[RMDB]
RNA sequence: GGGAACGACUCGAGUAGAGUCGAAAAUUAGGUGGCUAAUAAUGAUUGUUCUGAGGAUGGUGUCACCACACAUUUAGUGAGCAUUACCUGCCAGCGGAGGGUAAGUUGAAUAUUGAAGAAUAUAACCAGCCUUUACGUAAUUCGUUACGUAAAGGCUAAAAGAAACAACAACAACAAC
Reactivity to 2A3 in 0.01 (KOAc 150mM, MgCl2 10mM, bicine 150mM(pH8.5), 24C), signal-to-noise 1, nucleotides 027 to 126: u100u050a000g000g060u030g000g000c000u050a000a070u140a120a080u210g090a110u040u150g070u110u030c010u040g030a040g040g000a030u020g040g030u050g110u110c030a000c040c040a020c000a000c040a030u150u190u040a070g000u040g110a020g000c010a000u060u010a040c000c010u010g040c030c020a040g010c070g020g030a030g020g060g000u010a010a070g060u030u050g060a060a010u070a030u060u130g070a090a020g030a080a000u210a020u000a100a020c040c010
Reactivity to DMS in 0.01 (KOAc 150mM, MgCl2 10mM, bicine 150mM(pH8.5), 24C), signal-to-noise 4, nucleotides 027 to 126: u010u000a070g030g030u000g000g020c030u000a080a100u000a060a090u010g010a120u000u010g000u000u000c020u010g010a140g020g000a090u000g010g000u000g000u000c090a050c110c050a110c060a050c080a100u000u000u020a070g020u000g010a070g000c050a070u000u010a070c060c040u010g010c030c040a080g020c060g010g010a110g000g020g000u000a010a050g000u000u000g000a050a060u000a060u010u000g010a080a070g000a070a050u010a020u000a100a130c170c140